An RNA of 177 nucleotides, treated with DMS and 2A3 and read out base by base. For DMS the reverse transcriptase was MarathonRT. The DMS profile rests on 1,607 reads.

RNA sequence: GGGAACGACUCGAGUAGAGUCGAAAAAAAGAUAUGGAAUCGAUGUUAACUUGGAUUUAGGGUGAAAUCUAUAUCGGAAACGAUAUAGACACACCCUUGUCAGUUAAGAUCGAUUCCUAAGUCAAAACGUCACAAAUAAGUUCGCUUAUUUGUGACGAAAAGAAACAACAACAACAAC
Reactivity to DMS in 0.01 (KOAc 150mM, MgCl2 10mM, bicine 150mM(pH8.5), 24C), signal-to-noise 2, nucleotides 027 to 126: a090a090a100g000a040u000a300u040g000g000a010a000u000c000g030a010u000g000u000u000a000a000c020u000u020g040g020a020u020u030u000a010g000g000g060u000g000a070a090a230u000c000u000a000u000a020u000c000g020g000a150a030a180c000g010a010u000a010u000a040g000a030c290a300c010a000c000c000c000u000u000g000u000c000a020g000u000u000a000a000g020a000u000c000g010a000u000u010c000c000u000a000a040g030u000c030a140a090a040a160
Reactivity to 2A3 in 0.01 (KOAc 150mM, MgCl2 10mM, bicine 150mM(pH8.5), 24C), signal-to-noise 2, nucleotides 027 to 126: a010a010a050g080a030u140a050u110g010g000a000a000u000c000g000a000u010g080u300u010a010a020c040u120u290g300g000a060u300u300u140a030g010g010g000u020g040a210a120a090u010c000u000a000u000a000u010c000g000g000a030a080a020c000g010a000u000a000u000a000g020a000c010a000c000a000c000c040c010u000u000g000u000c000a010g000u000u000a020a030g060a060u010c010g000a000u000u000c000c000u000a000a000g040u020c020a000a030a070a120
Reactivities are given for positions 27 through 126. It was measured as part of the RMDB library TTRDES. The RNA was probed in 150 mM KOAc, 10 mM MgCl2 and 150 mM bicine (pH 8.5) at 24 C.